RNA sequence: GGGAACGACUCGAGUAGAGUCGAAAACAUGCGAAAGGAUGGAAGCAUGGCGUCCAUACCUGCGCGAUCUGUCCUAGCAUGCGAAAGGAUGGGACGACAUGACUACACGGCCUACGGACGGAUGGGAAAGCAUGCCCGGACUCGUUCGGCCAUCCGAGUCUCAGCAGAUUUUCGAAUCUGCUGAGACAAAAGAAACAACAACAACAAC
Reactivity to 2A3 in 0.01 (KOAc 150mM, MgCl2 10mM, bicine 150mM(pH8.5), 24C), signal-to-noise 1, nucleotides 027 to 156: c050a020u080g070c090g040a070a040a090g020g020a020u020g020g060a080a010g000c000a000u020g010g010c010g030u000c000c000a000u050a120c000c000u000g070c010g000c020g030a100u140c010u060g120u050c060c030u000a020g040c060a070u180g010c010g040a060a020a020g000g040a020u100g130g000g110a070c000g000a010c000a020u100g040a080c010u050a020c070a000c020g070g000c000c000u110a070c040g040g000a000c000g000g000a020u080g010g000g000a040a190a130g000c050a110u210g000c000c000c040g010g010a030c030u040c090g000u040u040c000g030g020c020c030a010u000c000c020g000a040
Structure probing data (2A3) for a 207-nucleotide construct. The RNA was probed in 150 mM KOAc, 10 mM MgCl2 and 150 mM bicine (pH 8.5) at 24 C. For 2A3 the reverse transcriptase was SuperScript II with manganese.